[RMDB]
RNA sequence: GGGAACGACUCGAGUAGAGUCGAAAAGAUAUGGAUAAUGAGGAGCAACAGCCUCGGGUCGGAAACGACCCAGAGGACAUGCUCCCAUUAUCCUAAGUCAAAAGACAAGGUGUUCGCACCUUGUCAACUCACUAAAUGGCUUCGGCCAUUUAGUGAGAAAAGAAACAACAACAACAAC
Reactivity to DMS in 0.01 (KOAc 150mM, MgCl2 10mM, bicine 150mM(pH8.5), 24C), signal-to-noise 1, nucleotides 027 to 126: g010a020u000a070u020g000g000a010u000a010a010u000g000a220g080g000a010g010c000a160a110c290a090g020c000c000u000c000g000g000g000u000c000g000g020a020a010a060c010g040a000c000c000c020a030g010a010g020g020a000c060a160u000g000c000u000c000c000c000a010u000u000a000u000c000c000u010a000a040g000u000c010a050a100a120a170g000a020c010a030a000g010g010u000g010u000u010c220g050c000a000c000c000u000u000g010u010c000a070a040
Reactivity to 2A3 in 0.01 (KOAc 150mM, MgCl2 10mM, bicine 150mM(pH8.5), 24C), signal-to-noise 2, nucleotides 027 to 126: g000a000u020a000u030g000g010a000u000a010a000u050g100a260g080g000a010g040c130a220a140c040a300g000c030c010u000c000g010g030g000u000c000g030g000a010a010a000c000g000a010c000c010c000a010g000a000g030g000a000c010a130u300g000c010u000c000c000c010a000u010u000a000u000c000c000u010a000a000g000u000c010a060a000a100a130g010a000c010a000a000g000g000u020g050u080u240c300g040c160a000c010c000u000u010g000u000c000a000a000